Structure probing data (2A3 and DMS) for a 177-nucleotide construct.
Source: RMDB library OK2TST, as collected in RNAgym.
For 2A3, 2,245 sequencing reads were counted.
RNA sequence: GGGAACGACUCGAGUAGAGUCGAAAAGGGCGCUGGCGCGAGGCCGCCUGGCAACUCUGCGACUACUACCUGCCCUACGCGCUGGGCGGCGGCUACGUGCUCUCGGCCGACCUGGUGCACUACCUGCGAUUUGAUACGUCUUCGGACGUAUCAAAUCAAAAGAAACAACAACAACAAC
Reactivity to 2A3 in 0.01 (KOAc 150mM, MgCl2 10mM, bicine 150mM(pH8.5), 24C), signal-to-noise 2, nucleotides 027 to 126: g000g000g050c020g000c060u020g000g000c030g020c040g090a060g040g060c030c030g070c050c040u030g010g010c010a040a170c020u060c070u170g060c040g130a140c020u150a030c030u070a090c080c020u020g020c000c010c000u010a020c050g010c030g000c000u020g000g000g000c000g010g000c000g000g000c020u060a070c100g110u160g020c010u000c020u000c030g120g000c010c000g050a220c000c000u030g010g090u000g010c020a030c080u150a110c020c020u040g060c030
Reactivity to DMS in 0.01 (KOAc 150mM, MgCl2 10mM, bicine 150mM(pH8.5), 24C), signal-to-noise 3, nucleotides 027 to 126: g020g000g010c100g020c090u000g000g010c020g010c060g010a160g030g000c050c010g020c070c090u020g030g020c030a090a090c100u010c020u020g010c050g010a080c050u000a120c110u010a090c060c070u000g000c000c010c020u000a070c140g000c080g000c030u000g020g000g020c010g000g020c000g010g000c040u000a080c130g010u010g010c030u000c090u000c090g010g010c020c000g030a140c020c010u000g000g010u000g000c010a110c110u000a060c060c020u000g010c170